[RMDB]
Chemical mapping of a 207-nucleotide RNA with 2A3 and DMS. For 2A3, 2,687 sequencing reads were counted. For DMS the reverse transcriptase was MarathonRT. It was measured as part of the RMDB library OK3TST. 2A3 adducts were read by reverse transcription with SuperScript II with manganese.
RNA sequence: GGGAACGACUCGAGUAGAGUCGAAAAACACAUUUACGAUAGUGUUGCUGGAAGCACGCUGCUAAUAAAUAAUGAUCGUAAUGAACUGACUAUUUAUCAGAAUACUACAGUAGUAAUUAAUGAUACAGAGACUGUUGAAAUACUUAAUGAAGAUACCUCAUGCUAUAAAUUUCGAUUUAUAGCAUGAAAAAGAAACAACAACAACAAC
Reactivity to 2A3 in 0.01 (KOAc 150mM, MgCl2 10mM, bicine 150mM(pH8.5), 24C), signal-to-noise 4, nucleotides 027 to 156: a000c060a010c020a050u060u070u040a020c020g010a020u020a060g020u030g060u210u040g020c030u060g150g100a110a030g050c000a010c020g010c020u050g000c040u090a090a040u080a150a210a060u180a050a130u160g060a010u030c010g000u010a070a000u040g050a070a040c040u030g080a030c030u090a140u170u110u070a080u090c020a010g070a110a050u080a110c020u060a030c010a060g130u100a000g000u000a040a030u120u090a050a080u050g020a010u010a100c020a000g080a000g040a070c030u030g020u030u020g050a070a060a040u070a060c020u050u070a040a060u170g040a060a030g040a080u120a050c140c000
Reactivity to DMS in 0.01 (KOAc 150mM, MgCl2 10mM, bicine 150mM(pH8.5), 24C), signal-to-noise 3, nucleotides 027 to 156: a070c070a120c060a080u000u000u000a090c070g020a130u000a100g030u000g010u000u000g010c020u000g020g010a120a120g050c080a080c070g030c010u000g020c000u010a070a080u000a090a060a060u000a070a090u000g000a070u000c010g020u000a060a110u000g010a120a140c030u010g010a030c040u000a070u000u010u000a070u000c010a090g010a150a280u000a080c030u000a050c020a050g040u000a080g010u010a030a090u000u000a050a090u000g000a180u010a070c050a100g010a120g000a050c090u000g000u000u010g000a060a090a100u000a060c070u000u000a050a090u000g000a100a070g040a150u000a070c100c060